Chemical mapping of a 207-nucleotide RNA with DMS and 2A3. Source: RMDB library ARCHII, as collected in RNAgym. The RNA was probed in 150 mM KOAc, 10 mM MgCl2 and 150 mM bicine (pH 8.5) at 24 C. DMS adducts were read by reverse transcription with MarathonRT. Values cover nucleotides 27 to 156.
RNA sequence: GGGAACGACUCGAGUAGAGUCGAAAAGGUCUGCCCAUUCCAAGCCGGGAGUUGGGCUGAGUGACCUGGGCGAAGGCUGGGUUGCGCAGCUCCUAGAGUGGAGGGCAAUGCGUGAGGCUGGCUUCACAGAGCAGCGACUACCUCCCGCUCUCGGCAGGUAAGUAUCACUCUUCGGAGUGAUACUUACAAAAGAAACAACAACAACAAC
Reactivity to DMS in 0.01 (KOAc 150mM, MgCl2 10mM, bicine 150mM(pH8.5), 24C), signal-to-noise 1, nucleotides 027 to 156: g020g040u010c050u000g010c010c010c030a250u030u000c030c060a030a110g060c000c030g000g010g010a080g000u000u010g020g000g000c000u030g010a020g000u000g000a030c010c020u000g050g090g030c040g000a100a090g010g010c020u000g000g000g000u000u000g040c020g000c000a100g000c010u000c000c080u000a120g010a140g000u000g020g000a070g010g000g000c070a050a050u000g020c040g010u000g000a190g000g020c000u020g020g000c090u010u000c160a120c100a040g000a120g050c040a160g000c070g020a170c050u000a090c010c010u010c000c010c010g000c010u000c010u000c000g010g000c020a020g010
Reactivity to 2A3 in 0.01 (KOAc 150mM, MgCl2 10mM, bicine 150mM(pH8.5), 24C), signal-to-noise 5, nucleotides 027 to 156: g090g040u050c070u110g090c020c000c020a050u160u060c070c010a100a040g010c000c000g010g030g000a010g000u090u090g020g010g000c010u010g000a020g010u000g000a000c020c010u080g050g060g000c130g090a180a040g200g000c000u020g010g000g020u000u000g000c030g000c000a000g000c030u140c030c070u150a120g020a030g050u300g020g000a000g000g010g040c060a040a080u120g010c020g010u080g020a040g020g070c030u020g040g060c030u240u170c110a130c030a080g030a010g020c010a000g010c000g020a030c020u060a040c010c000u010c000c010c000g000c000u000c000u000c010g000g020c000a000g000